Structure probing data (2A3 and DMS) for a 177-nucleotide construct. As a SHAPE reagent, 2A3 marks flexible, mostly unpaired nucleotides at the ribose 2'-OH. DMS adducts were read by reverse transcription with MarathonRT. Source: RMDB library TTRDEL, as collected in RNAgym. Conditions: 150 mM KOAc, 10 mM MgCl2 and 150 mM bicine (pH 8.5), 24 C. DMS (dimethyl sulfate) methylates the pairing face of unpaired adenines and cytosines.
RNA sequence: GGGAACGACUCGAGUAGAGUCGAAAAGAUAUGGAUGUCUCAUUUAAGCUUGGAUUUAUCGGAAACGAUUGUCAGCUUGGGAUGAGGACAUCCUAAGUCAAAACGUACGGACUUCGGUCCGUACGAACAUACACAUGUUCUUCGGAACAUGUGUAUGAAAAGAAACAACAACAACAAC
Reactivity to 2A3 in 0.01 (KOAc 150mM, MgCl2 10mM, bicine 150mM(pH8.5), 24C), signal-to-noise 9, nucleotides 027 to 126: g020a030u080a040u170g010g000a000u000g000u000c000u000c020a020u010u030u050a030a010g010c040u150u300g190g010a080u300u300u150a030u070c010g010g030a080a030a050c020g020a020u000u030g020u020c010a000g000c010u030u040g150g050g020a010u020g020a080g100g080a010c000a000u000c000c000u010a080a020g060u020c030a020a020a080a120c010g000u000a000c000g000g010a000c000u070u120c300g090g000u000c000c000g000u000a000c000g000a000a000
Reactivity to DMS in 0.01 (KOAc 150mM, MgCl2 10mM, bicine 150mM(pH8.5), 24C), signal-to-noise 9, nucleotides 027 to 126: g010a050u000a300u010g010g010a010u000g000u000c000u000c000a010u000u000u000a030a020g010c010u000u000g030g010a020u010u010u000a010u000c000g010g000a120a100a160c010g010a010u000u000g010u000c010a030g010c000u000u000g020g020g000a000u000g000a060g020g000a020c000a010u000c000c000u000a010a090g000u000c060a100a050a110a210c010g010u000a010c000g000g000a020c000u000u010c210g030g010u000c000c000g010u000a000c000g000a030a090